About this RNA:
Structure probing data (2A3) for a 207-nucleotide construct. 2A3 adducts were read by reverse transcription with SuperScript II with manganese. Reactivities are given for positions 27 through 156. The reactions ran in a buffer of 150 mM KOAc, 10 mM MgCl2 and 150 mM bicine (pH 8.5), at 24 C. The data come from the RNA Mapping Database (RMDB), library OK3TST.
[RMDB]
RNA sequence: GGGAACGACUCGAGUAGAGUCGAAAAAAGCAAAGCAACAACAACAACAAAACAGAAUUCAGGUGGGUUCUAGAAGCUAGAAAAGGUAAGGAAAUAAAUUCUCCCUAGAGCUUUAGCCCAGUAGAAGCACAGACUUCUGACCUCUAGAGCUAUUAGAACCCCUUGGUAGUUUCGACUACCAAGGGGUAAAAGAAACAACAACAACAAC
Reactivity to 2A3 in 0.01 (KOAc 150mM, MgCl2 10mM, bicine 150mM(pH8.5), 24C), signal-to-noise 1, nucleotides 027 to 156: a000a000g010c000a000a000a000g000c300a000a000c000a000a000c000a000a000c000a000a000c000a000a000a300a100c050a020g060a170a150u030u180c000a000g100g110u000g000g090g000u000u000c000u070a070g070a130a000g070c050u040a000g200a040a120a060a000g030g030u070a040a020g050g020a240a020a000u120a040a150a020u100u050c000u040c020c000c000u110a110g040a000g060c040u040u000u060a070g000c010c010c010a000g000u020a000g020a000a000g000c040a000c040a300g120a050c000u010u000c000u050g140a070c000c000u030c000u040a000g010a000g210c000u020a090u180u110a020g080a000